Overview:
Structure probing data (2A3 and DMS) for a 177-nucleotide construct. The 2A3 profile rests on 2,026 reads. The RNA was probed in 150 mM KOAc, 10 mM MgCl2 and 150 mM bicine (pH 8.5) at 24 C.
RNA sequence: GGGAACGACUCGAGUAGAGUCGAAAAGAUAUGGAGGUCACUACCCACCCAUGAUAAGCAACAGCGUCGUUUAAUCGGAAACGAUUAAACGACGACAUGCUUGUUUGUGGAGGUGACCUCCUAAGUCGUAAUGGUAUUGCUUCGGCAAUACCAUUACAAAAGAAACAACAACAACAAC
Reactivity to 2A3 in 0.01 (KOAc 150mM, MgCl2 10mM, bicine 150mM(pH8.5), 24C), signal-to-noise 1, nucleotides 027 to 126: g200a110u300a230u300g000g000a000g040g000u020c010a040c050u230a300c030c010c000a030c020c050c000a060u040g030a050u010a040a000g020c000a020a100c130a180g100c040g000u000c000g000u000u000u040a000a000u000c020g030g000a010a110a000c010g010a000u000u000a000a000a000c030g010a000c000g000a010c000a010u020g040c020u020u020g070u020u110u300g000u040g000g000a030g030g020u000g010a000c000c010u000c000c000u030a010a000g100u080c040
Reactivity to DMS in 0.01 (KOAc 150mM, MgCl2 10mM, bicine 150mM(pH8.5), 24C), signal-to-noise 1, nucleotides 027 to 126: g020a240u030a130u000g000g040a000g030g010u010c010a020c010u000a160c030c010c040a300c050c160c030a010u000g020a000u010a000a000g020c000a070a080c300a160g010c030g010u000c000g010u000u000u000a010a000u000c000g000g000a150a160a190c000g000a020u000u000a010a010a000c000g010a000c000g000a010c120a080u000g040c000u000u000g030u000u000u040g040u000g010g010a170g010g010u000g000a000c000c000u000c000c010u000a010a050g020u030c160